[RMDB]
An RNA of 177 nucleotides, treated with 2A3 and read out base by base. 2A3 adducts were read by reverse transcription with SuperScript II with manganese. The reactions ran in a buffer of 150 mM KOAc, 10 mM MgCl2 and 150 mM bicine (pH 8.5), at 24 C.
RNA sequence: GGGAACGACUCGAGUAGAGUCGAAAAGAACAUGGACAGCACAAAUGUCGUCAACGCGAAGGCUGAAAGACCUAAGGGCGCAGGAUUAGCAAAUUUGUGCACUGGAGCAGGAGCUAACCCUGGAUUCGCGACCGAUGAGUUUCGACUCAUCGGUCGCAAAAGAAACAACAACAACAAC
Reactivity to 2A3 in 0.01 (KOAc 150mM, MgCl2 10mM, bicine 150mM(pH8.5), 24C), signal-to-noise 1, nucleotides 027 to 126: g000a020a000c000a000u050g000g060a050c000a010g000c000a000c110a130a000a160u180g100u080c000g060u060c020a020a000c050g000c000g140a040a040g000g000c020u080g040a230a040a040g000a000c000c000u000a000a300g000g100g000c000g000c080a000g100g000a210u100u060a080g070c070a000a000a230u160u070u000g000u000g000c300a270c050u130g100g080a000g000c000a030g000g000a000g000c000u140a180a180c000c020c000u000g240g000a170u160u100c010